[RMDB]
RNA sequence: GGGAACGACUCGAGUAGAGUCGAAAACAGCUGGUUUUACCAGCGUGACUGAUUCAAGAGAGAGAAAAAUGACCUAAUCUUGCAAGUCAGACACUGUCACUUCUGCCACAUUCUGUUAGUCAGAAGCAGGUCAUUAAUGGCAGCCUGCACUCAAGGACCUGAUCGUAAUCUUCGGAUUACGAUCAGGAAAAGAAACAACAACAACAAC
Reactivity to 2A3 in 0.01 (KOAc 150mM, MgCl2 10mM, bicine 150mM(pH8.5), 24C), signal-to-noise 2, nucleotides 027 to 156: c020a010g000c010u010g000g030u030u150u130u300a060c000c000a000g000c000g010u000g030a040c010u010g000a000u070u010c040a060a020g000a000g000a000g020a000g060a010a280a080a020a030u120g040a020c020c020u060a110a090u010c000u010u080g000c070a140a020g040u050c000a000g010a040c020a020c040u070g020u050c040a010c140u090u020c000u030g000c000c000a110c020a140u040u040c020u020g070u040u110a120g140u150c060a030g000a010a010g050c060a040g070g000u040c050a030u020u190a070a110u110g010g000c000a020g010c000c000u100g000c080a000c040u050c070a060a060g100g020a060